[RMDB]
Structure probing data (DMS) for a 177-nucleotide construct. The data come from the RNA Mapping Database (RMDB), library M2PK50. DMS adducts were read by reverse transcription with MarathonRT. The reactions ran in a buffer of 150 mM KOAc, 10 mM MgCl2 and 150 mM bicine (pH 8.5), at 24 C. The DMS profile rests on 1,360 reads.
RNA sequence: GGGAACGACUCGAGUAGAGUCGAAAAACCUAUGGAUUCGUCCAUAGGUGCUGGCGGGCGGCCUUUGUCCUGUCGCGUGUGCGUGGUGGGCGAUAUACGCGCAAUAGUGACAAUUCGUUGUCACUAAAUCUGGUAUCCUCUUCGGAGGAUACCAGAUAAAAGAAACAACAACAACAAC
Reactivity to DMS in 0.01 (KOAc 150mM, MgCl2 10mM, bicine 150mM(pH8.5), 24C), signal-to-noise 1, nucleotides 027 to 126: a040c000c000u000a000u010g000g000a010u000u010c190g030u000c000c000a000u000a020g020g020u000g010c140u000g020g000c060g000g020g030c090g000g010c050c090u000u000u030g000u000c040c050u000g000u010c050g010c030g040u000g040u000g030c040g020u000g010g010u000g020g000g020c050g020a120u000a080u000a070c040g030c010g010c180a090a170u010a030g010u000g000a040c010a010a040u000u010c210g010u000u000g000u000c000a010c000u000a000a050